[RMDB]
Notes: Structure probing data (DMS and 2A3) for a 177-nucleotide construct. High 2A3 reactivity points to a flexible backbone, as in loops and unpaired stretches. It was measured as part of the RMDB library OK1LIB. Conditions: 150 mM KOAc, 10 mM MgCl2 and 150 mM bicine (pH 8.5), 24 C. Reactivities are rounded to 0.1 and cut off at 0 and 3.
RNA sequence: GGGAACGACUCGAGUAGAGUCGAAAAGCCACCGCCAGCAAUGUGUUCGGUGCCGUUGGCCAGGUAAAUCUGGAGCAAUAUGCCGCAGCGGUGGCCUCUGCAGCUGCCGCCAGCCGGCCGACGCAGAGAUAUUAGCUGCAUUCGUGCAGCUAAUAUCAAAAGAAACAACAACAACAAC
Reactivity to DMS in 0.01 (KOAc 150mM, MgCl2 10mM, bicine 150mM(pH8.5), 24C), signal-to-noise 5, nucleotides 027 to 126: g010c030c010a030c000c000g000c050c060a100g020c150a070a070u020g000u030g000u000u020c030g020g040u010g000c070c050g010u010u010g030g010c040c020a040g000g010u020a070a070a140u060c010u010g000g000a100g010c010a060a060u010a120u030g000c010c030g030c120a230g000c010g000g000u000g000g000c020c020u010c040u020g000c080a180g020c040u010g000c000c000g010c020c120a060g030c130c030g010g000c000c060g000a080c080g000c020a020g000a100
Reactivity to 2A3 in 0.01 (KOAc 150mM, MgCl2 10mM, bicine 150mM(pH8.5), 24C), signal-to-noise 9, nucleotides 027 to 126: g010c010c000a020c020c010g030c010c020a040g020c050a090a160u140g050u020g050u130u090c030g010g030u040g040c020c020g050u060u070g040g020c040c030a090g020g030u140a110a130a150u090c030u050g050g010a060g080c010a040a050u120a080u300g060c040c040g020c050a020g000c000g010g000u010g000g000c000c010u060c020u050g020c040a040g000c010u030g000c000c000g000c020c020a040g030c070c020g010g000c000c010g010a020c020g000c020a010g020a010